[RMDB]
RNA sequence: GGGAACGACUCGAGUAGAGUCGAAAAACGGCUAUACAAUUAUUAACGAUAUCACUGAUCGCAAAGCACAAAGUGAACAAGAUCAAGCAUUUUUAUCAAAAAGUUUAACUGGCGGUUGCCCAAUGGGCUCUAGCUAACCCUUCGGGGUUAGCUAGAGAAAAGAAACAACAACAACAAC
Reactivity to DMS in 0.01 (KOAc 150mM, MgCl2 10mM, bicine 150mM(pH8.5), 24C), signal-to-noise 2, nucleotides 027 to 126: a040c060g030g000c040u000a030u000a120c130a110a130u060u000a040u010u000a040a150c140g010a110u000a000u000c090a110c000u000g000a010u000c070g000c050a030a120a200g000c020a000c050a130a090a000g010u000g000a040a040c070a190a060g020a000u050c040a040a020g000c140a020u000u000u000u040u000a040u050c030a040a170a120a120a040g020u020u000u000a030a160c270u000g020g000c000g050g080u000u000g000c030c000c000a060a110u060g020g000g000
Reactivity to 2A3 in 0.01 (KOAc 150mM, MgCl2 10mM, bicine 150mM(pH8.5), 24C), signal-to-noise 4, nucleotides 027 to 126: a010c020g040g010c020u030a010u040a220c110a180a150u190u090a100u100u160a270a040c090g000a020u010a000u080c070a050c030u070g010a030u020c010g020c140a090a050a040g060c020a020c040a170a160a080g070u030g070a060a050c020a100a040g040a040u060c030a020a020g030c040a090u110u100u010u060u070a050u010c030a000a060a020a060a140g060u030u090u030a080a050c040u000g030g010c020g030g020u030u070g010c000c000c020a020a010u110g050g100g010